[RMDB]
RNA sequence: GGGAACGACUCGAGUAGAGUCGAAAACUCAACCUCAGACCACAACUCCUCUACCUGCAGUUUCCGGUUCUCCUGGGGCAGCAAUCACCCCUUUGCCAUCCACACAGAAUGGACCUGUCUUUGCGAAUCCCCAAAUCCUAUUCGUAGGAUUUGGGGAAAAAGAAACAACAACAACAAC
Reactivity to DMS in 0.01 (KOAc 150mM, MgCl2 10mM, bicine 150mM(pH8.5), 24C), signal-to-noise 1, nucleotides 027 to 126: c040u010c050a070a140c060c080u010c060a110g000a090c050c040a030c080a080a090c060u000c030c020u010c080u000a130c030c010u000g000c050a040g000u000u000u000c040c020g000g010u000u000c070u000c070c030u000g010g030g010g010c100a110g030c080a010a070u030c100a140c030c000c020c050u020u000u000g000c030c010a060u000c040c040a080c110a100c140a040g000a030a050u010g000g000a100c070c020u000g030u000c020u000u010u000g010c110g000a100a170